[RMDB]
RNA sequence: GGGAACGACUCGAGUAGAGUCGAAAAUGCGUUCAGGCUCUCGAUACGCCGGGAUAACCUGGCGUCAGACCUGCCGGAACUUAGCAGGGAAUCGUUACGGAUCUGCUGUAUAGCCGGAUCCACACGACCAUGUUAUUCAGUUCGCUGAAUAACAUGGAAAAGAAACAACAACAACAAC
Reactivity to 2A3 in 0.01 (KOAc 150mM, MgCl2 10mM, bicine 150mM(pH8.5), 24C), signal-to-noise 5, nucleotides 027 to 126: u070g000c030g020u020u080c010a010g010g010c020u000c000u020c050g050a040u030a150c010g000c020c010g000g030g030a150u130a300a290c010c000u010g010g000c000g010u000c000a010g000a030c010c030u010g010c000c010g040g000a040a030c030u150u100a080g000c030a010g000g060g080a030a110u040c000g010u040u070a040c090g010g000a000u000c000u020g020c020u020g090u200a180u270a070g060c090c070g010g010a000u000c000c000a000c000a000c000g020a020
Reactivity to DMS in 0.01 (KOAc 150mM, MgCl2 10mM, bicine 150mM(pH8.5), 24C), signal-to-noise 5, nucleotides 027 to 126: u000g030c040g010u000u010c020a050g010g000c030u000c080u020c030g010a190u010a050c040g020c010c000g000g000g010a250u010a140a170c020c000u000g000g010c000g000u000c160a140g000a040c140c030u000g020c060c020g010g010a020a050c070u020u010a120g000c000a050g000g010g020a100a080u000c000g000u010u010a150c270g010g000a020u000c000u000g020c000u000g000u010a100u020a020g030c080c090g030g000a020u000c000c000a080c200a030c030g010a120